[RMDB]
RNA sequence: GGGAACGACUCGAGUAGAGUCGAAAAGAGCUGAAGUACAGCAAGAACGACGAAAUCCUUGGCAAAGCGUCGAAGAUAAGCGUGCCGAGUGCCAAGGAUUAACGGCACGCGAGGCGAAGACGCCAGACAUAAUGCAUCACUUCGGUGAUGCAUUAUGAAAAGAAACAACAACAACAAC
Reactivity to DMS in 0.01 (KOAc 150mM, MgCl2 10mM, bicine 150mM(pH8.5), 24C), signal-to-noise 7, nucleotides 027 to 126: g020a150g030c000u000g000a170a110g060u030a150c040a020g020c060a130a110g020a130a160c080g010a080c140g000a120a090a030u000c010c010u010u010g000g010c020a110a120a140g000c100g000u010c060g000a110a150g000a090u020a070a170g000c000g020u010g000c010c000g010a160g000u000g010c000c000a000a030g000g000a020u010u010a010a090c050g010g000c000a010c000g000c010g000a050g000g010c010g010a200a100g010a070c040g010c010c130a130g010a240
Reactivity to 2A3 in 0.01 (KOAc 150mM, MgCl2 10mM, bicine 150mM(pH8.5), 24C), signal-to-noise 8, nucleotides 027 to 126: g110a010g000c020u040g020a170a040g140u230a190c010a000g000c010a020a050g100a100a030c080g090a010c030g020a070a150a020u020c000c000u000u000g010g000c040a110a080a100g100c050g070u090c060g090a060a020g050a120u180a120a050g010c000g000u000g000c000c010g020a090g080u090g010c000c000a000a000g000g010a000u020u020a000a000c000g000g000c000a000c000g000c000g000a050g000g010c040g040a110a040g050a070c060g010c000c000a000g020a020